[RMDB]
RNA sequence: GGGAACGACUCGAGUAGAGUCGAAAAUGACCAACUACGUACGUCACAGGGAUUUCCACCACUGAACUACGUUGGUGGCAAAGGUAGUGGUAACGACACAGAGGAGAGCUGCCGCAGUGGAGGCUCCAUGGUGGUCAGCAUUCGUGCUGACCACCAUAAAAGAAACAACAACAACAAC
Reactivity to 2A3 in 0.01 (KOAc 150mM, MgCl2 10mM, bicine 150mM(pH8.5), 24C), signal-to-noise 1, nucleotides 027 to 126: u100g020a060c000c000a060a030c020u000a000c020g060u050a000c040g060u030c030a010c000a130g080g040g050a090u110u150u120c030c110a040c000c000a060c020u020g030a050a000c010u090a020c050g020u000u050g030g000u010g000g000c060a050a020a070g110g000u090a030g060u010g050g000u010a060a120c050g060a030c000a000c010a120g090a020g110g010a060g000a000g000c010u040g050c010c010g000c040a030g060u230g080g000a060g000g000c000u000c000c000
Reactivity to DMS in 0.01 (KOAc 150mM, MgCl2 10mM, bicine 150mM(pH8.5), 24C), signal-to-noise 2, nucleotides 027 to 126: u000g000a120c000c000a070a040c070u000a040c000g000u000a000c300g000u000c040a040c020a030g000g000g020a120u020u000u030c220c160a170c020c000a040c010u000g000a300a020c020u000a050c070g000u010u010g000g010u000g020g030c050a070a050a080g000g000u000a070g020u000g000g020u030a050a090c180g010a120c040a040c040a050g010a090g000g010a090g040a080g020c030u010g000c040c010g010c130a050g000u020g010g010a060g000g010c040u000c010c070
The data come from the RNA Mapping Database (RMDB), library OK2TST. This 177-nucleotide RNA was probed chemically with 2A3 and DMS. 2A3 adducts were read by reverse transcription with SuperScript II with manganese. For 2A3, 1,174 sequencing reads were counted. The reactions ran in a buffer of 150 mM KOAc, 10 mM MgCl2 and 150 mM bicine (pH 8.5), at 24 C.